[RMDB]
RNA sequence: GGGAACGACUCGAGUAGAGUCGAAAAUGAACCCCGCCGCCACGAAACGCGGCAGGCCGACCUUCUCUUUCAGUAUCAGCGCGGAAAUGAGCAUACCAAAGAGGAUCGCGGUUUCGCGCAGUGCCGACCAUAAAUUAGCCUUCGGGCUAAUUUAUGGAAAAGAAACAACAACAACAAC
Reactivity to 2A3 in 0.01 (KOAc 150mM, MgCl2 10mM, bicine 150mM(pH8.5), 24C), signal-to-noise 3, nucleotides 027 to 126: u100g010a010a050c020c010c020c010g000c010c010g020c020c010a100c100g150a180a130a020c050g010c010g010g010c010a010g060g010c020c060g050a110c010c040u120u120c020u030c000u040u110u040c050a030g020u030a090u120c040a030g040c010g010c020g020g080a020a020a030u210g030a100g010c020a030u070a170c010c020a180a170a050g180a090g070g000a030u060c060g000c000g050g000u000u020u020c020g010c000g000c020a000g010u030g060c010c000g060a060
Reactivity to DMS in 0.01 (KOAc 150mM, MgCl2 10mM, bicine 150mM(pH8.5), 24C), signal-to-noise 3, nucleotides 027 to 126: u000g000a120a160c190c020c010c060g010c000c000g020c050c090a080c070g000a100a150a060c190g000c030g000g030c030a050g020g010c100c020g010a120c060c070u010u010c030u000c030u000u000u000c070a050g020u000a050u000c070a100g020c020g030c020g000g010a010a030a070u000g000a090g000c030a030u000a200c040c060a060a100a100g020a150g010g000a040u000c300g000c040g020g030u000u000u000c030g020c020g020c030a100g020u000g020c040c030g020a200

About this RNA
An RNA of 177 nucleotides, treated with 2A3 and DMS and read out base by base. The RNA was probed in 150 mM KOAc, 10 mM MgCl2 and 150 mM bicine (pH 8.5) at 24 C. The 2A3 profile rests on 3,554 reads. It was measured as part of the RMDB library OK2TST.